Structure probing data (2A3 and DMS) for a 207-nucleotide construct. Conditions: 150 mM KOAc, 10 mM MgCl2 and 150 mM bicine (pH 8.5), 24 C. For 2A3 the reverse transcriptase was SuperScript II with manganese. Reactivities are rounded to 0.1 and cut off at 0 and 3. The 2A3 profile rests on 2,070 reads.
RNA sequence: GGGAACGACUCGAGUAGAGUCGAAAACGAAUUCACGAAUGUCCGCCCAGCGACGAGCGCGCCAACAUUCGCAGCGCAACGCCUCUUGGAUUUGCAAAGGCGGUUUUCCUUUCGAAUGCACCCCAUCCCAACAAGAAGCGGGAGGCAGCAUGACGCCGGCGAUGUAUUUAUUCGUAAAUACAUCGCCAAAAGAAACAACAACAACAAC
Reactivity to 2A3 in 0.01 (KOAc 150mM, MgCl2 10mM, bicine 150mM(pH8.5), 24C), signal-to-noise 4, nucleotides 027 to 156: c020g030a030a050u210u140c110a020c100g050a070a060u060g050u040c010c000g020c000c030c020a010g020c030g060a080c040g010a020g000c060g000c000g020c020c040a100a080c040a200u160u200c060g000c100a040g000c020g010c040a050a050c070g030c040c000u090c070u080u110g130g060a220u180u040u300g030c060a070a050a040g000g000c000g000g000u070u020u030u000c000c000u070u060u030c050g060a100a030u070g020c040a110c020c020c000c000a030u040c000c010c000a010a120c040a100a100g130a100a020g070c080g020g020g000a010g020g020c010a010g010c000a040u100g030a050c080g060c100c030
Reactivity to DMS in 0.01 (KOAc 150mM, MgCl2 10mM, bicine 150mM(pH8.5), 24C), signal-to-noise 1, nucleotides 027 to 156: c050g000a110a090u000u000c060a090c090g020a040a040u000g000u000c020c000g000c000c050c030a260g050c030g000a090c120g030a180g000c170g030c090g000c040c040a080a060c040a160u000u000c040g030c060a130g050c060g020c030a110a060c040g050c010c020u000c030u000u000g050g010a170u000u000u000g020c000a050a050a050g000g030c060g000g000u010u000u010u000c020c010u010u000u000c060g010a050a070u010g000c060a110c030c010c030c010a160u000c030c000c010a000a120c100a080a090g000a090a150g030c070g010g010g000a070g000g020c050a130g000c030a040u000g010a120c010g050c110c030

Values cover nucleotides 27 to 156.